[RMDB]
RNA sequence: GGGAACGACUCGAGUAGAGUCGAAAAGCUGGCCCAGGACUGGGAGCGGGUGAGUGCCCCAGAGCCCGCGGAAGGGCCUCCUGGUAUCUGGAGAGCAUUUGGCCAGAGAGGAGAGCCAGAUGGCUGGCAUGUGUCGUGAUUUCGAUCACGACACAUGAAAAGAAACAACAACAACAAC
Reactivity to 2A3 in 0.01 (KOAc 150mM, MgCl2 10mM, bicine 150mM(pH8.5), 24C), signal-to-noise 2, nucleotides 027 to 126: g020c000u010g000g000c000c000c000a030g050g030a030c040u030g000g030g040a090g080c040g030g010g040u130g070a300g090u230g050c000c020c030c000a040g000a060g080c010c010c000g000c070g060g140a090a070g070g020g000c000c000u000c000c000u030g020g020u050a220u110c020u010g020g010a130g020a030g120c040a050u080u020u080g040g020c040c010a030g050a020g010a030g130g060a100g010a030g000c010c000a010g000a070u050g030g070c020u030g000g000
Reactivity to DMS in 0.01 (KOAc 150mM, MgCl2 10mM, bicine 150mM(pH8.5), 24C), signal-to-noise 3, nucleotides 027 to 126: g010c020u000g010g000c000c010c060a070g000g000a130c030u010g010g010g010a110g020c120g020g020g010u020g000a240g010u010g000c030c010c000c030a110g020a300g010c000c000c010g010c160g010g010a190a120g010g000g010c020c040u000c010c010u010g000g010u000a080u000c000u000g000g010a160g000a110g020c070a060u000u000u010g010g020c010c020a100g010a070g020a120g010g000a100g000a180g000c000c000a030g000a060u000g000g000c000u000g000g000
Chemical mapping of a 177-nucleotide RNA with 2A3 and DMS.
For 2A3, 1,448 sequencing reads were counted.
The RNA was probed in 150 mM KOAc, 10 mM MgCl2 and 150 mM bicine (pH 8.5) at 24 C.
For DMS the reverse transcriptase was MarathonRT.
Reactivities are given for positions 27 through 126.